[RMDB]
Conditions: 150 mM KOAc, 10 mM MgCl2 and 150 mM bicine (pH 8.5), 24 C. This 207-nucleotide RNA was probed chemically with DMS and 2A3.

RNA sequence: GGGAACGACUCGAGUAGAGUCGAAAAGAACACUCAGUGCACACUGUAGACUGUGCUCGCUUCGCCAGUCAAGUGAGGAAUGUGAUCAGAUGCACAUUCCACAGUCUAGACACCAGUGUGCAGUGUUGUCGCAUGAACACUGCACUGAGACUGGCGACGUUACUUGCUAGUUCGCUAGCAAGUAACGAAAAGAAACAACAACAACAAC
Reactivity to DMS in 0.01 (KOAc 150mM, MgCl2 10mM, bicine 150mM(pH8.5), 24C), signal-to-noise 3, nucleotides 027 to 156: g010a110a070c050a130c040u010c030a130g010u000g000c040a090c050a050c070u010g000u010a080g010a080c040u000g020u020g010c050u000c060g020c040u000u000c000g040c000c020a040g030u010c020a130a070g020u000g020a130g030g010a060a010u000g000u000g010a080u000c030a300g000a190u010g010c000a010c000a020u000u010c000c010a050c000a040g000u000c050u000a120g010a220c040a130c300c030a060g000u000g070u000g010c010a030g040u000g010u000u000g030u010c090g000c100a120u000g000a070a050c040a050c030u010g010c020a090c020u000g010a100g010a040c010u000g010g010c010g000a090
Reactivity to 2A3 in 0.01 (KOAc 150mM, MgCl2 10mM, bicine 150mM(pH8.5), 24C), signal-to-noise 2, nucleotides 027 to 156: g000a030a000c060a010c040u050c020a030g010u000g010c000a010c000a000c030u030g050u110a020g020a040c030u020g000u030g000c010u010c020g040c010u010u000c020g020c000c000a000g000u000c000a060a000g030u000g020a010g010g000a000a000u010g000u000g010a020u070c120a030g040a090u240g010c000a000c010a010u030u000c000c000a000c010a000g010u000c000u020a020g010a050c020a020c050c030a020g030u020g000u010g020c000a000g000u010g000u000u040g080u040c030g000c050a040u130g020a020a000c010a010c000u000g030c010a000c030u030g040a040g010a060c000u000g010g000c010g000a000
Background:
The DMS profile rests on 6,898 reads. It was measured as part of the RMDB library OK3TST.